[RMDB]
RNA sequence: GGGAACGACUCGAGUAGAGUCGAAAAGCAGUUUCACUCACUGUAGACUCUGAGCGCAGAGUGUCAGUCGAGCUACCACAUGCUCGUGAUCAGAGUAUGUGUGAACUCUGACUGACGACACAAUCGCUUGUGUCCUAUAUAAUGAAACUGGUGAGUCCCCUAAUUAUCAGUUCGCUGAUAAUUAGGGAAAAGAAACAACAACAACAAC
Reactivity to DMS in 0.01 (KOAc 150mM, MgCl2 10mM, bicine 150mM(pH8.5), 24C), signal-to-noise 4, nucleotides 027 to 156: g000c000a010g000u000u010u000c010a050c020u020c040a080c110u000g030u000a020g010a020c010u000c000u000g020a300g020c100g020c040a040g010a080g030u000g020u000c000a030g010u000c010g000a030g020c000u000a180c110c030a030c030a040u000g010c000u010c000g010u010g020a170u010c210a170g010a040g030u000a020u010g000u020g030u010g020a050a020c000u010c000u000g040a020c010u010g000a030c010g000a030c010a020c010a050a130u000c110g020c090u000u000g010u000g020u000c010c010u000a030u000a030u000a040a040u000g000a020a000a030c010u000g010g020u000g000a160g000u000c060
Reactivity to 2A3 in 0.01 (KOAc 150mM, MgCl2 10mM, bicine 150mM(pH8.5), 24C), signal-to-noise 9, nucleotides 027 to 156: g080c000a000g000u010u000u000c010a020c020u020c000a080c030u020g000u010a000g000a000c000u000c010u010g040a070g200c070g000c030a000g000a000g000u000g000u000c000a000g000u000c000g000a000g000c020u080a100c000c010a000c000a000u000g000c000u010c010g070u140g110a220u300c120a050g000a000g010u010a000u000g010u000g050u050g030a030a020c000u010c080u160g000a000c000u000g000a000c000g000a000c000a000c000a010a200u300c080g020c190u010u020g000u000g000u000c000c000u000a010u010a010u010a020a020u020g000a000a010a000c010u010g030g070u070g040a030g110u080c010
An RNA of 207 nucleotides, treated with DMS and 2A3 and read out base by base.
For DMS the reverse transcriptase was MarathonRT.
For 2A3, 28,653 sequencing reads were counted.
The RNA was probed in 150 mM KOAc, 10 mM MgCl2 and 150 mM bicine (pH 8.5) at 24 C.
For 2A3 the reverse transcriptase was SuperScript II with manganese.
The data come from the RNA Mapping Database (RMDB), library OK3TST.